[RMDB]
RNA sequence: GGGAACGACUCGAGUAGAGUCGAAAAUGGAAUCGGUAUAGAUUAUGUCGGGGAGACCGACAGCAUAGCUUAAAACCAUCGUGAAGUCGUUGCUUCGUGCCAUGGCUCGUGAUGACCGAAUGCUACGGACCAUUUUAGGGUUCGCCCUAAAAUGGUCAAAAGAAACAACAACAACAAC
Reactivity to 2A3 in 0.01 (KOAc 150mM, MgCl2 10mM, bicine 150mM(pH8.5), 24C), signal-to-noise 2, nucleotides 027 to 126: u140g040g040a060a050u010c000g000g010u090a120u090a210g080a040u060u060a060u130g020u010c020g000g000g010g010a160g090a080c000c000g000a000c000a000g060c020a060u200a010g010c020u080u070a090a050a000a000c030c000a000u000c000g020u010g130a190a020g000u000c000g050u000u040g000c000u080u100c210g100u140g040c000c010a010u020g000g000c000u000c000g000u040g010a020u020g000a000c040c000g020a030a010u110g000c010u020a040c040g130
Reactivity to DMS in 0.01 (KOAc 150mM, MgCl2 10mM, bicine 150mM(pH8.5), 24C), signal-to-noise 1, nucleotides 027 to 126: u010g000g000a060a080u000c020g000g010u010a100u000a100g000a080u010u020a070u000g000u000c000g000g010g000g020a290g030a200c000c000g000a020c040a010g000c180a070u010a050g010c000u000u010a050a110a090a130c260c030a000u000c030g030u010g000a090a020g070u000c020g000u000u000g000c040u000u020c160g000u000g010c010c040a040u000g000g010c000u000c010g000u020g040a030u000g000a030c000c020g000a070a050u000g010c020u020a040c200g000